[RMDB]
RNA sequence: GGGAACGACUCGAGUAGAGUCGAAAAGAUCGUGGGGAUGACGCCCGUGGCGUAGUGGUCAUAGAUCCGCCGAAAUAUGGCGCUGCUGCGGGUGGCCAUGGGAACGCGGAGACAGGCCUCCAGCAACGCCAGGUAAAUAAACCGCGUGCGUCCCAUCCACUGACGAUGAGUUCGCUCAUCGUCAGUGAAAAGAAACAACAACAACAAC
Reactivity to 2A3 in 0.01 (KOAc 150mM, MgCl2 10mM, bicine 150mM(pH8.5), 24C), signal-to-noise 1, nucleotides 027 to 156: g140a060u160c030g020u080g030g060g000g010a040u130g030a000c000g030c010c000c020g000u030g020g000c090g030u100a030g020u100g200g030u050c040a140u090a060g010a060u000c000c090g000c000c000g120a070a050a010u170a010u070g000g000c010g000c020u030g050c070u040g000c010g060g000g070u060g040g000c010c000a080u000g040g000g060a120a000c030g000c000g000g040a010g000a030c080a030g010g010c000c020u030c000c030a030g030c060a050a030c010g020c010c010a000g000g020u040a000a080a160u130a050a120a010c020c020g000c000g000u020g030c030g030u020c000c020c000a030u090c030